[RMDB]
RNA sequence: GGGAACGACUCGAGUAGAGUCGAAAACCGUCCAUCCCUCCCCCCCAAGGGUCGCCCAGGAAUGGCGGGACCCCACUCAACUGGGGUCCGCGUUCCAUCCUUUCUUACCUGAUGGCCGGCAUGGUCCGGCCAAUUUCACGUUCGCGUGAAAUUGGCCAAAAGAAACAACAACAACAAC
Reactivity to DMS in 0.01 (KOAc 150mM, MgCl2 10mM, bicine 150mM(pH8.5), 24C), signal-to-noise 3, nucleotides 027 to 126: c020c010g010u010c040c050a090u010c020c020c000u000c000c000c000c000c010c010c040a090a100g010g010g020u000c020g000c020c020c070a100g010g010a060a030u000g010g020c000g030g010g000a020c010c010c000c010a000c050u010c300a070a100c180u000g000g010g000g000u000c000c010g000c010g020u000u000c020c000a100u000c040c030u000u010u000c070u000u000a100c090c060u010g010a080u000g000g020c010c010g000g010c040a110u010g010g000u010c060c070